Structure probing data (2A3) for a 207-nucleotide construct. For 2A3 the reverse transcriptase was SuperScript II with manganese. The 2A3 profile rests on 941 reads. Conditions: 150 mM KOAc, 10 mM MgCl2 and 150 mM bicine (pH 8.5), 24 C.
RNA sequence: GGGAACGACUCGAGUAGAGUCGAAAACGCUGGGCAUCACAGGUUCCGGGAGCACCGAUGAGUGCUGAAGCGCGCACGGCACGAGGUGUCGGAACCGUGAUGCCUGUGCUGAAGCGCGCACGGCAACCGAAAGGUGCGAUCGGGGAUUUCGAUCCCCUCUCUGGGCAAAAUUCGUUUUGCCCAGAGAAAAAGAAACAACAACAACAAC
Reactivity to 2A3 in 0.01 (KOAc 150mM, MgCl2 10mM, bicine 150mM(pH8.5), 24C), signal-to-noise 1, nucleotides 027 to 156: c020g000c010u000g010g000g010c000a000u000c020a070c100a300g000g000u020u000c000c000g000g030g020a170g030c010a000c020c010g120a300u260g040a020g010u000g030c000u010g040a220a060g000c010g000c000g010c000a020c000g060g030c000a000c000g080a090g070g060u160g300u300c000g000g000a010a010c000c000g000u010g000a000u000g000c000c010u000g000u000g000c010u050g000a140a050g010c020g000c010g050c010a070c070g010g020c000a020a000c010c000g050a070a090a040g040g000u010g010c030g000a040u130c080g000g000g000g000a000u060u080u210c200g030a050u030c010c000c000c000